Structure probing data (2A3 and DMS) for a 177-nucleotide construct. Values cover nucleotides 27 to 126. For 2A3 the reverse transcriptase was SuperScript II with manganese. Source: RMDB library OK2TST, as collected in RNAgym.

RNA sequence: GGGAACGACUCGAGUAGAGUCGAAAAAGCGAGGACAGGAGCCCGUCACCCAUGAGCUCUCAAGGGCAGAGCCACUGUCCUGUCUCGAUGGCUCCACCGUGACUCCAGUGGACUUUGGACAGUGGGGUAGCCUUUAGUUCUUCGGAACUAAAGGCUAAAAAGAAACAACAACAACAAC
Reactivity to 2A3 in 0.01 (KOAc 150mM, MgCl2 10mM, bicine 150mM(pH8.5), 24C), signal-to-noise 1, nucleotides 027 to 126: a000g070c070g000a030g040g020a030c040a100g040g010a020g040c010c000c000g060u070c030a110c010c020c000a040u170g080a000g020c030u030c010u000c080a060a190g000g020g030c070a010g000a020g060c000c030a010c010u010g000u000c000c010u000g010u000c000u000c030g210a140u200g000g000c000u000c020c010a220c030c060g110u140g060a050c000u050c040c010a030g010u170g100g010a010c020u270u120u140g000g000a020c030a020g000u030g000g000g050g020
Reactivity to DMS in 0.01 (KOAc 150mM, MgCl2 10mM, bicine 150mM(pH8.5), 24C), signal-to-noise 2, nucleotides 027 to 126: a150g000c070g000a070g020g000a100c060a080g040g010a060g020c030c000c040g010u000c080a180c020c040c010a110u010g020a030g000c000u000c030u000c130a130a090g000g000g020c120a070g000a240g010c010c000a040c020u000g020u000c020c010u010g000u000c000u000c150g020a070u010g000g000c300u010c000c000a040c100c100g000u010g000a090c100u010c030c040a060g010u000g000g000a050c120u000u020u000g010g000a050c030a020g010u020g000g010g010g030
The reactions ran in a buffer of 150 mM KOAc, 10 mM MgCl2 and 150 mM bicine (pH 8.5), at 24 C.